[RMDB]
RNA sequence: GGGAACGACUCGAGUAGAGUCGAAAAACCGGAGGCCGACAAUGCAGGGAACCGGAUGUCAUCACGUUGUUGCAGUACCAGAUGGCAUCUUAAAUCCGAUCUGCAAAUAAGCAUGUAGAAAGCUGAUAAAAUCACACACACUUCGGUGUGUGUGAAAGGUCUAAAGUAGGUUCGCCUACUUUAGACCAAAAGAAACAACAACAACAAC
Reactivity to 2A3 in 0.01 (KOAc 150mM, MgCl2 10mM, bicine 150mM(pH8.5), 24C), signal-to-noise 2, nucleotides 027 to 156: a000c010c010g030g030a100g010g050c000c000g010a050c120a120a170u060g000c020a000g030g010g000a010a020c050c080g040g000a000u000g000u000c020a000u010c010a010c160g050u070u050g060u010u020g040c110a110g070u090a060c040c000a020g000a000u010g010g000c000a000u020c010u010u030a050a070a000u000c000c000g050a100u070c000u010g000c000a000a000a080u220a040a020g060c070a020u130g030u050a050g100a100a060a030g020c050u030g050a020u110a090a210a020a030u000c000a000c000a000c000a000c000a000c000u010u160c150g080g000u000g000u000g040u010g000u010g000a000a000a000
Reactivity to DMS in 0.01 (KOAc 150mM, MgCl2 10mM, bicine 150mM(pH8.5), 24C), signal-to-noise 2, nucleotides 027 to 156: a110c020c040g010g010a150g020g000c020c010g000a100c040a070a060u000g030c010a020g000g020g000a060a070c080c110g020g020a020u020g010u000c000a030u010c020a270c260g000u010u010g000u000u000g030c000a170g000u000a090c040c090a150g000a030u000g000g000c020a020u000c010u010u000a060a110a180u000c050c010g000a110u000c030u000g030c000a020a060a050u010a070a080g020c020a050u010g010u000a130g000a060a100a120g020c030u010g000a170u010a020a100a160a210u010c020a030c000a010c020a010c000a010c010u000u010c300g060g030u010g000u020g030u020g010u000g000a010a020a050